Structure probing data (2A3 and DMS) for a 207-nucleotide construct. The 2A3 profile rests on 1,550 reads. The RNA was probed in 150 mM KOAc, 10 mM MgCl2 and 150 mM bicine (pH 8.5) at 24 C. Values cover nucleotides 27 to 156. For 2A3 the reverse transcriptase was SuperScript II with manganese. In probing experiments dimethyl sulfate is read out at A N1 and C N3, which are open when not base-paired.
RNA sequence: GGGAACGACUCGAGUAGAGUCGAAAAUAACACUGGCGGCUGCGUAUCACUGUAGGGUACGUGAUAGUGCGAUAUAAGAAGCACUGGUACAUGCCGGCAGGGACAGUUAAGAGAUGGCCGCAGUCUCAAAAGGGGUCAUUCUUCGGAAUGACCCCAAGAUCUAAGUUGUGUUCGCACAACUUAGAUCAAAAGAAACAACAACAACAAC
Reactivity to 2A3 in 0.01 (KOAc 150mM, MgCl2 10mM, bicine 150mM(pH8.5), 24C), signal-to-noise 2, nucleotides 027 to 156: u100a000a020c050a000c060u040g200g000c000g010g020c010u040g000c100g030u030a000u020c020a040c150u150g060u200a120g040g130g020u020a020c010g010u000g040a040u050a060g000u010g000c040g000a030u030a030u090a300a130g140a140a010g000c000a000c020u000g000g030u100a030c030a050u230g010c010c000g000g000c030a000g020g000g000a040c080a040g030u020u110a120a030g020a020g000a070u080g020g090c010c010g010c040a000g010u000c000u010c070a050a110a020a030g000g010g000g000u000c000a000u000u000c000u020u070c100g060g000a000a000u000g000a010c000c000c000c000a000a000
Reactivity to DMS in 0.01 (KOAc 150mM, MgCl2 10mM, bicine 150mM(pH8.5), 24C), signal-to-noise 2, nucleotides 027 to 156: u000a080a110c040a090c040u010g010g020c030g040g010c010u000g010c060g000u000a050u000c000a080c030u000g030u000a140g030g030g030u010a000c030g030u000g010a060u000a020g000u010g020c000g000a130u010a130u000a160a150g030a200a250g020c010a030c010u000g000g030u000a060c060a100u000g000c020c010g060g030c010a060g000g000g000a070c080a060g020u000u000a080a160g000a120g010a150u000g020g030c030c030g000c040a190g010u010c020u000c010a060a090a190a190g020g030g060g000u000c000a010u000u000c030u010u000c300g040g020a020a020u010g000a040c000c010c010c000a000a020